[RMDB]
RNA sequence: GGGAACGACUCGAGUAGAGUCGAAAAGGGGCAGGGUGGUGACCACACACCGGGCACCGUACCGCCAUCGGGCCCGCGGGUGCGGUAGGCGUGGCCGGGUCACCACUAAACUUGACGGCCUGAUGGCACAAAACGCUUGUUUCGACAAGCGUUUUGUAAAAGAAACAACAACAACAAC
Reactivity to DMS in 0.01 (KOAc 150mM, MgCl2 10mM, bicine 150mM(pH8.5), 24C), signal-to-noise 1, nucleotides 027 to 126: g010g010g010g000c130a060g000g020g040u000g000g010u010g000a020c020c080a130c140a130c120a070c260c020g010g040g030c040a060c020c000g000u020a070c030c050g000c020c060a020u000c030g000g000g020c040c030c120g040c060g000g000g010u000g000c020g000g010u000a070g020g010c110g000u010g000g020c020c040g020g010g000u000c000a040c020c010a010c030u000a020a150a150c090u000u010g000a130c090g000g020c000c010u010g000a060u000g040g020c090